Overview: Structure probing data (DMS and 2A3) for a 177-nucleotide construct. 2A3 adducts were read by reverse transcription with SuperScript II with manganese. DMS adducts were read by reverse transcription with MarathonRT. For 2A3, 909 sequencing reads were counted. As a SHAPE reagent, 2A3 marks flexible, mostly unpaired nucleotides at the ribose 2'-OH.

[RMDB]
RNA sequence: GGGAACGACUCGAGUAGAGUCGAAAAUGCAGAAGGUCUGUAACGAACAGCUGACCCACUGGUUUGAAGCCAACCCCACCGACGCGAAAGUCGUUGUGAACAAGGCUGUGUCCUCGGCGCAAGCCCGCUCAACGGGUGACUUCGGUCACCCGUUGAGAAAAGAAACAACAACAACAAC
Reactivity to DMS in 0.01 (KOAc 150mM, MgCl2 10mM, bicine 150mM(pH8.5), 24C), signal-to-noise 1, nucleotides 027 to 126: u030g000c120a060g000a030a120g030g000u050c050u050g000u010a080a140c130g000a040a080c190a090g010c040u000g000a150c020c000c070a130c000u000g000g030u010u000u000g000a180a120g000c050c020a080a050c070c060c000c000a090c000c060g000a000c050g010c080g080a100a120a000g000u000c080g050u000u000g040u000g000a080a070c010a080a080g000g040c050u000g000u010g040u000c050c040u000c010g010g010c050g000c150a000a250g000c030c050c030g070
Reactivity to 2A3 in 0.01 (KOAc 150mM, MgCl2 10mM, bicine 150mM(pH8.5), 24C), signal-to-noise 2, nucleotides 027 to 126: u140g000c020a000g030a300a000g060g050u030c000u020g060u070a120a150c210g010a110a000c060a030g030c020u040g030a080c000c000c000a040c040u060g040g150u000u060u220g170a120a040g000c030c000a020a070c000c000c000c000a020c020c000g000a010c000g040c060g140a090a040a040g040u060c000g050u040u070g020u000g060a090a080c050a200a030g030g000c000u020g070u000g070u110c000c000u030c090g000g000c000g000c030a040a040g000c020c060c060g000